This 177-nucleotide RNA was probed chemically with 2A3 and DMS.
Source: RMDB libraries RFM100 and RFMREP, as collected in RNAgym.
The reactions ran in a buffer of 150 mM KOAc, 10 mM MgCl2 and 150 mM bicine (pH 8.5), at 24 C.
2A3 adducts were read by reverse transcription with SuperScript II with manganese.
RNA sequence: GGGAACGACUCGAGUAGAGUCGAAAAAUCGCUGACAAAAGUGCCCGCACCCUGUUUCGAGCCAAAAAAGCAGGAGGGCGAAAGUAGGUUAAGAGACAUCGCAAGACCUUCAAAACGAACUAUGCGACCGAUACCUAACAUUCGUGUUAGGUAUCGGAAAAGAAACAACAACAACAAC
Reactivity to 2A3 in 0.01 (KOAc 150mM, MgCl2 10mM, bicine 150mM(pH8.5), 24C), signal-to-noise 4, nucleotides 027 to 126: a010u040c020g000c040u030g060a050c060a010a140a010a000g160u140g020c000c000c000g000c060a130c010c040c000u010g040u020u060u140c140g060a130g090c050c060a130a120a070a020a000a000g000c020a010g000g030a050g010g020g000c000g000a040a030a010g110u100a020g020g010u050u010a140a000g070a000g030a140c020a130u100c020g020c040a010a050g040a020c010c000u080u070c040a120a150a010a010c040g000a010a000c050u040a050u160g010c000g030a040
Reactivity to DMS in 0.01 (KOAc 150mM, MgCl2 10mM, bicine 150mM(pH8.5), 24C), signal-to-noise 2, nucleotides 027 to 126: a060u000c030g010c010u010g010a110c050a080a030a060a100g000u010g000c040c000c010g000c260a110c070c000c010u010g010u020u030u010c070g040a140g030c130c280a030a060a070a110a060a040g060c020a030g020g020a060g010g000g000c000g000a040a050a080g020u000a020g000g010u010u060a110a170g020a080g010a090c260a120u050c040g010c080a040a110g030a060c040c020u000u040c070a090a050a060a140c080g010a030a080c040u020a010u020g010c000g010a070